[RMDB]
RNA sequence: GGGAACGACUCGAGUAGAGUCGAAAAGAUAUGGAUGAUGUCUGGAGCUAGGAGCUGCAUCGGAAACGAUGUUGCUCCUUGGACCUCCAGAGCAUCAUCCUAAGUCAAACGACCGUUCGCGGUCGAACUCAUGUAAUACCUUCGGGUAUUACAUGAGAAAAGAAACAACAACAACAAC
Reactivity to 2A3 in 0.01 (KOAc 150mM, MgCl2 10mM, bicine 150mM(pH8.5), 24C), signal-to-noise 4, nucleotides 027 to 126: g030a020u080a020u220g000g000a000u010g000a000u000g040u040c010u000g010g010a020g020c030u020a010g010g010a010g000c000u020g000c010a000u010c020g040g000a110a070a020c010g000a010u000g000u020u000g010c010u000c010c010u000u010g000g020a020c010c000u000c000c000a000g010a010g020c000a010u010c000a000u000c000c000u000a070a010g020u010c050a120a090a130c020g000a000c020c010g010u060u090c300g010c030g110g010u000c000g020a060a020
Reactivity to DMS in 0.01 (KOAc 150mM, MgCl2 10mM, bicine 150mM(pH8.5), 24C), signal-to-noise 8, nucleotides 027 to 126: g000a060u000a300u010g010g000a010u000g010a010u000g010u000c000u000g000g000a020g020c030u000a020g010g010a010g010c000u000g010c000a010u000c000g010g010a140a100a240c010g020a010u000g010u000u000g010c000u000c000c000u000u000g020g010a100c300c010u000c000c000a010g000a060g010c000a000u000c010a000u000c000c000u000a000a100g010u010c030a100a110a260c020g000a010c000c000g010u010u020c210g020c030g010g010u000c000g000a070a140
Overview
The record gives the reactivity of an RNA of 177 nucleotides to 2A3 and DMS. It was measured as part of the RMDB library TTRDES. 2A3 adducts were read by reverse transcription with SuperScript II with manganese. Reactivities are rounded to 0.1 and cut off at 0 and 3.